An RNA of 177 nucleotides, treated with 2A3 and read out base by base.
RNA sequence: GGGAACGACUCGAGUAGAGUCGAAAAUUUCAAUACUUACUUCAGAAGCUUUGGCCAUUUCUAAAGUAUGACCAAGUAGACCAAAACCAGUUAUAUCUGUAACCGAAUUUACAUCAAAUUUCUCAAACCCACGAUACUGGUUCGCCAGUAUCGUGGGAAAAGAAACAACAACAACAAC
Reactivity to 2A3 in 0.01 (KOAc 150mM, MgCl2 10mM, bicine 150mM(pH8.5), 24C), signal-to-noise 2, nucleotides 027 to 126: u020u190u040c010a150a020u150a060c000u130u010a040c030u040u020c000a000g030a070a080g060c000u180u060u030g050g000c040c040a050u020u000u000c020u090a060a070a040g000u030a030u110g030a010c010c010a020a020g090u010a030g110a080c000c070a080a140a000a000c000c000a020g000u120u000a070u050a080u180c030u070g240u120a020a030c040c040g060a100a040u160u100u040a090c040a020u070c010a030a070a180u040u000u000c080u000c020a020a170a180
The reactions ran in a buffer of 150 mM KOAc, 10 mM MgCl2 and 150 mM bicine (pH 8.5), at 24 C. It was measured as part of the RMDB library OK1LIB.